[RMDB]
RNA sequence: GGGAACGACUCGAGUAGAGUCGAAAAAAAAGAUAUGGAUGUAAGGGAGGCAGUGCAGCGAAGAACAGUCUUCGGAAACGAAGACUGGGAGCUGACACUGCCGAAGAACUUACAUCCUAAGUCAAAAGUGAAACAUAACGUUCGCGUUAUGUUUCACAAAAGAAACAACAACAACAAC
Reactivity to DMS in 0.01 (KOAc 150mM, MgCl2 10mM, bicine 150mM(pH8.5), 24C), signal-to-noise 1, nucleotides 027 to 126: a080a020a070a040g010a020u020a270u000g030g000a010u000g000u000a030a030g000g040g010a160g000g000c010a030g060u010g000c000a030g030c000g010a050a100g000a090a190c010a000g000u010c000u010u010c000g020g010a050a050a100c000g010a000a010g020a040c000u000g000g010g000a040g050c010u000g000a090c010a000c000u000g000c000c010g060a020a050g000a100a220c000u000u000a010c000a010u030c010c000u000a010a090g000u010c010a110a130a130a140